[RMDB]
RNA sequence: GGGAACGACUCGAGUAGAGUCGAAAAUCUGUUGGUACACACAACUUGUUAGUAAGUAGUUAUUUAGGAAUGAACUAAAAAUCUUUUUCGUUCAAUCUCUGUGUAUCAUAUUUCCAAAUGGCUAUUAACUUAUUAGGACAUAAAUACUUAUUAAGUACGCGUAUAAUCCAUUCGUGGAUUAUACGCGAAAAGAAACAACAACAACAAC
Reactivity to 2A3 in 0.01 (KOAc 150mM, MgCl2 10mM, bicine 150mM(pH8.5), 24C), signal-to-noise 2, nucleotides 027 to 156: u040c010u020g100u050u040g000g080u040a010c000a000c030a000c020a070a090c130u050u050g010u080u080a090g010u050a060a120g010u030a010g010u010u070a020u080u020u030a090g040g000a060a050u040g000a000a000c040u120a010a030a070a220a220u210c090u040u050u010u000u000c010g000u010u010c010a080a080u020c130u020c100u160g020u010g000u040a020u030c000a010u030a080u190u070u000c000c000a000a000a070u010g000g000c000u000a020u040u100a150a000c000u010u040a000u030u020a040g050g000a020c020a040u150a110a210a010u100a120c030u010u110a060u110u010a050a000g000u020a020
Structure probing data (2A3) for a 207-nucleotide construct. The reactions ran in a buffer of 150 mM KOAc, 10 mM MgCl2 and 150 mM bicine (pH 8.5), at 24 C.